Overview: An RNA of 177 nucleotides, treated with DMS and 2A3 and read out base by base.
[RMDB]
RNA sequence: GGGAACGACUCGAGUAGAGUCGAAAAGAUGGGAGUCCUCAGUUAAAUGGUGAUAAUAACAUACAAUCAAGUGAUGGUCAUAACGACGAAAAUGAAGAGUCGUUAUCGAGGAAGCGUGACUCUUCUACAUGACUCCAUCAUUCGUGAUGGAGUCAUGAAAAGAAACAACAACAACAAC
Reactivity to DMS in 0.01 (KOAc 150mM, MgCl2 10mM, bicine 150mM(pH8.5), 24C), signal-to-noise 3, nucleotides 027 to 126: g000a070u000g000g000g000a100g020u000c020c030u020c030a060g010u000u010a050a120a130u020g020g010u010g000a090u000a080a130u000a120a090c120a090u000a050c110a100a100u000c090a100a180g010u000g010a070u000g000g010u010c050a060u000a030a060c130g000a040c050g000a060a050a100a100u020g000a030a040g000a070g000u000c000g010u010u010a070u000c100g030a070g010g000a080a040g000c100g000u000g010a030c030u000c020u000u000c030u010a140
Reactivity to 2A3 in 0.01 (KOAc 150mM, MgCl2 10mM, bicine 150mM(pH8.5), 24C), signal-to-noise 2, nucleotides 027 to 126: g130a050u130g010g000g020a050g020u030c000c030u050c040a010g020u060u150a080a130a080u080g000g000u050g100a040u030a240a020u080a100a030c020a010u160a020c050a040a110u100c030a130a000g040u030g120a050u070g000g000u030c030a030u040a130a000c030g040a000c020g030a040a000a020a140u110g000a060a000g020a020g040u010c010g040u050u040a050u050c030g020a010g030g030a100a000g010c020g030u070g010a030c020u000c000u000u030c000u020a020

Conditions: 150 mM KOAc, 10 mM MgCl2 and 150 mM bicine (pH 8.5), 24 C. DMS adducts were read by reverse transcription with MarathonRT. As a SHAPE reagent, 2A3 marks flexible, mostly unpaired nucleotides at the ribose 2'-OH. The data come from the RNA Mapping Database (RMDB), library OK2TST. For 2A3, 1,888 sequencing reads were counted.